[RMDB]
RNA sequence: GGGAACGACUCGAGUAGAGUCGAAAACGUCGUGAACUAGCGACAAUGCCUUAGAUCCAUCGUUAUCUAACCGAAACAUCGUGACUAGUCGUAGAAUAGAACCAGGAGAGGUCGCUGGCAAACAAAGACGAAGUGUCUGAUUCGUCGGACGCUUCGUAAAAGAAACAACAACAACAAC
Reactivity to DMS in 0.01 (KOAc 150mM, MgCl2 10mM, bicine 150mM(pH8.5), 24C), signal-to-noise 9, nucleotides 027 to 126: c130g010u030c080g010u010g000a190a150c080u010a060g010c020g010a020c020a090a090u040g010c030c020u000u020a070g010a050u010c050c050a090u010c130g010u020u010a070u010c040u010a060a080c120c070g000a090a070a110c170a070u020c060g010u020g000a080c050u010a040g010u000c050g010u000a060g010a060a080u020a060g010a060a090c070c090a050g000g000a070g010a090g020g020u000c020g000c010u000g010g000c070a050a090a060c080a050a090a080g000
Reactivity to 2A3 in 0.01 (KOAc 150mM, MgCl2 10mM, bicine 150mM(pH8.5), 24C), signal-to-noise 9, nucleotides 027 to 126: c050g030u030c020g010u020g070a120a070c050u030a070g010c000g010a010c010a020a070u180g040c000c000u030u060a050g010a060u040c040c020a080u050c090g080u080u060a060u040c030u040a030a070c040c020g050a070a050a050c040a070u090c040g060u060g060a060c040u040a030g070u050c030g050u050a020g030a120a040u090a060g040a040a020c030c030a020g010g040a080g030a040g020g050u010c010g000c030u010g010g000c000a020a060a010c030a030a120a010g090